[RMDB]
RNA sequence: GGGAACGACUCGAGUAGAGUCGAAAAUGUGUCCUAGGGUAUUGGAAGGUCAUCCUUCACAGGAUCGUGUGGAAGUCCUGCUCGGGGCGGAAGCAUUAAAACCAUUCGAGCUAGUCAAUGCGUGGCGUUACCUCCAGGUUCUUCGGAACCUGGAGAACAUCUGUAUCGGAUUCGUCCGAUACAGAUGAAAAGAAACAACAACAACAAC
Reactivity to DMS in 0.01 (KOAc 150mM, MgCl2 10mM, bicine 150mM(pH8.5), 24C), signal-to-noise 2, nucleotides 027 to 156: u000g030u000g000u000c020c040u010a070g040g020g040u000a040u000u000g030g020a090a060g010g030u000c100a110u000c040c010u000u000c070a070c060a050g050g010a040u000c110g010u000g020u000g010g010a230a240g030u000c010c030u000g000c090u000c070g030g020g030g040c030g010g010a240a150g030c040a030u000u000a040a070a090a080c020c040a140u000u010c050g000a060g000c040u000a060g000u010c040a080a060u010g010c070g040u000g020g010c050g010u000u000a080c100c010u000c010c010a020g000g010u010u010c000u000u000c300g050g020a000a000c000c000u010g010g010a010g030a020a050
Reactivity to 2A3 in 0.01 (KOAc 150mM, MgCl2 10mM, bicine 150mM(pH8.5), 24C), signal-to-noise 2, nucleotides 027 to 156: u080g050u010g040u020c010c000u040a050g080g050g000u100a150u150u160g050g020a060a030g010g040u120c080a120u120c030c000u020u030c040a080c030a040g050g030a070u080c050g040u070g010u030g080g070a030a020g010u010c020c000u060g040c050u080c140g000g000g020g010c030g010g020a020a000g010c000a020u040u120a050a070a010a020c000c020a030u110u090c050g020a020g040c020u050a020g110u100c050a010a130u060g000c090g060u030g030g000c040g050u070u120a050c050c000u000c000c000a000g000g000u000u000c010u040u050c150g060g000a000a000c000c000u000g000g000a000g000a000a010